Notes: The record gives the reactivity of an RNA of 177 nucleotides to DMS and 2A3. The DMS profile rests on 778 reads. It was measured as part of the RMDB library OK1LIB. The RNA was probed in 150 mM KOAc, 10 mM MgCl2 and 150 mM bicine (pH 8.5) at 24 C.
RNA sequence: GGGAACGACUCGAGUAGAGUCGAAAAGACGCCUAAUGGCGAAAAUGUAAAAUCAACUACACAUCAGAUAAAUACAACUGCUAAAUCUCGUAACUAGUUGAUCUAGUCCAGCGGUGAGAUCCGCAGAAUAUGGCGAUACCUUCGGGUAUCGCCAUAUAAAAGAAACAACAACAACAAC
Reactivity to DMS in 0.01 (KOAc 150mM, MgCl2 10mM, bicine 150mM(pH8.5), 24C), signal-to-noise 1, nucleotides 027 to 126: g030a210c030g070c000c000u080a100a060u080g000g090c000g000a000a000a260a110u000g110u000a100a150a020a040u000c030a070a030c000u000a050c140a140c250a000u000c300a020g000a110u000a080a150a020u000a040c040a050a070c140u040g020c210u070a120a100a000u000c040u000c180g000u000a000a300c300u030a000g000u080u080g010a070u000c000u000a070g000u000c030c040a000g000c010g000g000u000g140a100g000a030u070c000c000g010c080a170g070a150
Reactivity to 2A3 in 0.01 (KOAc 150mM, MgCl2 10mM, bicine 150mM(pH8.5), 24C), signal-to-noise 1, nucleotides 027 to 126: g000a010c000g000c000c000u080a210a140u300g000g000c000g040a050a050a040a050u180g000u180a050a000a000a220u000c000a000a000c000u000a000c080a000c000a060u170c000a050g020a050u100a130a150a070u260a000c000a030a080c090u050g040c070u200a180a090a090u230c190u020c050g000u000a030a000c000u000a000g000u040u100g000a000u000c000u070a000g060u000c000c070a000g000c070g000g000u110g070a100g000a080u000c000c000g000c000a000g000a030